RNA sequence: GGGAACGACUCGAGUAGAGUCGAAAACGUUUGAGUUCAGUCCAGAGUAGUAGAAAGCACACAGAUAUCUGAAUUUGAAAGGUCUAUGUUCCCACACUAAACAUGGAUUGACAUGGCCUUGGGCGAGGAGGUGGAUAAUUUUCGAAUUAUCCACCUCAAAAGAAACAACAACAACAAC
Reactivity to 2A3 in 0.01 (KOAc 150mM, MgCl2 10mM, bicine 150mM(pH8.5), 24C), signal-to-noise 3, nucleotides 027 to 126: c040g010u020u100u180g120a070g000u090u040c010a000g010u030c040c000a020g020a030g030u090a010g010u020a020g080a080a100a000g030c030a030c000a000c020a020g030a030u040a080u110c020u030g110a180a170u080u110u120g130a170a080a000g000g010u000c040u090a030u070g000u000u010c000c000c010a010c000a000c010u130a070a100a010c040a060u030g030g000a060u030u110g020a040c020a030u060g020g010c000c000u050u080g020g050g030c030g020a070g060
Reactivity to DMS in 0.01 (KOAc 150mM, MgCl2 10mM, bicine 150mM(pH8.5), 24C), signal-to-noise 5, nucleotides 027 to 126: c080g010u010u010u020g030a080g000u000u000c020a050g020u010c050c020a050g000a090g020u000a040g020u000a060g010a080a100a130g010c070a040c020a040c040a050g000a090u000a070u000c030u000g020a070a150u000u000u010g010a080a100a050g010g010u000c020u010a040u010g010u010u000c080c000c010a140c180a060c100u000a040a060a070c110a090u000g000g000a070u000u000g010a050c120a070u010g000g000c040c030u020u000g010g020g010c060g010a090g010
Source information
Structure probing data (2A3 and DMS) for a 177-nucleotide construct. Conditions: 150 mM KOAc, 10 mM MgCl2 and 150 mM bicine (pH 8.5), 24 C. For DMS, 5,495 sequencing reads were counted. 2A3 adducts were read by reverse transcription with SuperScript II with manganese. DMS adducts were read by reverse transcription with MarathonRT. For 2A3, 2,920 sequencing reads were counted.